[RMDB]
RNA sequence: GGGAACGACUCGAGUAGAGUCGAAAACCAGUGUGUGCUUGGCGUGUUUUCAGGGAGGCAGAGAAAGGCUCUCCUAAUGCACGACAGACCCGCCCAGAAUGGCCUCUCUGUUCCUAGGAGUGCGACAUUCGCAUGAAGCGUUCGCGCUUCAUGCGAAAAAAGAAACAACAACAACAAC
Reactivity to 2A3 in 0.01 (KOAc 150mM, MgCl2 10mM, bicine 150mM(pH8.5), 24C), signal-to-noise 1, nucleotides 027 to 126: c000c010a000g010u030g000u000g000u000g140c040u050u090g010g020c000g000u030g040u010u000u070u130c080a050g000g020g000a000g060g000c040a000g060a000g070a220a080a030g100g000c000u000c010u000c090c000u050a010a010u050g020c010a020c040g000a000c030a010g040a010c000c000c110g060c000c030c000a000g050a040a170u050g100g010c000c000u040c000u000c010u000g070u120u090c000c000u000a000g000g010a120g000u060g000c080g000a030c030a090
Reactivity to DMS in 0.01 (KOAc 150mM, MgCl2 10mM, bicine 150mM(pH8.5), 24C), signal-to-noise 2, nucleotides 027 to 126: c010c020a130g000u010g040u030g020u000g030c040u000u010g010g000c030g010u000g050u000u030u000u020c060a140g000g000g020a040g000g030c010a100g000a170g040a150a150a130g000g040c010u010c020u020c000c010u000a040a040u010g030c030a020c010g000a040c060a000g010a050c030c020c100g000c030c050c050a150g010a110a080u010g010g000c000c000u000c030u000c070u000g000u000u000c010c030u020a160g020g040a010g000u020g000c010g010a090c140a120
An RNA of 177 nucleotides, treated with 2A3 and DMS and read out base by base.
The 2A3 profile rests on 706 reads.
DMS adducts were read by reverse transcription with MarathonRT.
It was measured as part of the RMDB libraries RFM100 and RFMREP.
Values are in units of 0.01, from 0 to 300, in steps of 10.